[RMDB]
RNA sequence: GGGAACGACUCGAGUAGAGUCGAAAAGAGAGCAGAGUGUUGAUCAAGAAGCAGGAAGUGGAUAUUCUGGAUCUGAAAGAAACCCUUAGGCUGAGAAUACUUUCUGAGGACAUAGAGAGGGAUAUGCAUAUAGGAGCGAGUUCGCUCGCUCCUAUAUAAAAGAAACAACAACAACAAC
Reactivity to DMS in 0.01 (KOAc 150mM, MgCl2 10mM, bicine 150mM(pH8.5), 24C), signal-to-noise 1, nucleotides 027 to 126: g000a110g010a080g020c030a040g010a080g020u000g030u010u000g020a100u010c060a050a050g000a070a080g010c100a040g000g010a080a060g020u010g010g000a080u000a080u020u000c040u000g000g010a120u000c120u000g020a070a140a060g000a110a060a120c060c030c020u000u000a050g010g000c010u020g000a080g020a090a070u000a080c060u000u000u000c030u000g020a050g010g000a030c110a070u000a090g000a060g000a050g000g000g000a060u000a030u010g010c100